Structure probing data (DMS and 2A3) for a 177-nucleotide construct. The RNA was probed in 150 mM KOAc, 10 mM MgCl2 and 150 mM bicine (pH 8.5) at 24 C. For 2A3, 1,833 sequencing reads were counted. For 2A3 the reverse transcriptase was SuperScript II with manganese.
[RMDB]
RNA sequence: GGGAACGACUCGAGUAGAGUCGAAAAAGCGGACCACCUGGGUGCUGUCGUAGUUGGAGGUGGCCUGAGGAGCUCAGUUCCCUCAGCGCCCGUAGCUUCGGCGGAGUCUGCGCGAUGGGCGACCCGGGAAGAGGCGUGAAUUCGUUCACGCCUCUUCAAAAGAAACAACAACAACAAC
Reactivity to DMS in 0.01 (KOAc 150mM, MgCl2 10mM, bicine 150mM(pH8.5), 24C), signal-to-noise 2, nucleotides 027 to 126: a110g040c040g000g000a120c020c040a130c030c000u040g020g020g000u020g030c020u010g000u020c030g010u010a070g000u010u000g000g020a170g010g010u040g000g000c030c010u000g000a010g000g000a180g050c050u020c200a120g000u010u010c090c000c010u010c050a040g050c090g000c000c020c040g040u030a190g000c020u000u010c030g000g000c050g000g020a150g010u020c010u000g020c300g000c070g000a050u010g000g000g000c040g000a080c030c000c010g040g000
Reactivity to 2A3 in 0.01 (KOAc 150mM, MgCl2 10mM, bicine 150mM(pH8.5), 24C), signal-to-noise 3, nucleotides 027 to 126: a010g080c060g040g030a090c030c000a040c000c000u040g000g010g050u060g020c000u000g000u000c020g020u030a170g050u050u120g070g070a090g060g020u150g050g010c000c000u010g000a010g020g000a040g020c040u040c260a080g040u140u070c040c010c000u000c000a040g000c060g000c080c000c000g020u080a010g010c000u040u050c070g010g000c040g070g020a070g020u020c030u040g000c000g000c020g110a130u090g070g060g000c000g010a050c000c000c000g040g020